[RMDB]
An RNA of 207 nucleotides, treated with 2A3 and read out base by base. For 2A3, 583 sequencing reads were counted. Conditions: 150 mM KOAc, 10 mM MgCl2 and 150 mM bicine (pH 8.5), 24 C. Values cover nucleotides 27 to 156.
RNA sequence: GGGAACGACUCGAGUAGAGUCGAAAACGGACUCGCAGCUUAAUAACCUGCGCUGAGCCCUUCUCCCCCAGCUUGCCUGUGUCCUAGGGAAUUGGAAGGUCAUCCUUCACAGGAUCGUGUGGAAGUCAUUACUCGUGAGUGUUCGCACUCACGAGAAGAUAACUAGUCGCUUCGGCGACUAGUUAUCAAAAGAAACAACAACAACAAC
Reactivity to 2A3 in 0.01 (KOAc 150mM, MgCl2 10mM, bicine 150mM(pH8.5), 24C), signal-to-noise 1, nucleotides 027 to 156: c010g000g010a010c000u010c050g000c000a010g040c000u000u050a000a000u010a090a040c020c020u010g070c020g000c230u080g020a060g030c040c010c000u090u060c070u000c000c040c000c000c010a030g080c000u020u130g060c010c000u020g000u020g030u090c040c090u080a070g000g100g140a110a100u140u110g140g010a070a080g000g000u160c000a040u170c060c010u000u000c010a010c000a020g010g020a040u120c050g030u110g000u070g110g000a050a030g020u060c040a180u110u190a080c010u000c020g000u020g000a000g000u020g060u000u080c100g040c110a000c020u000c000a000c000g000a000g000a000a000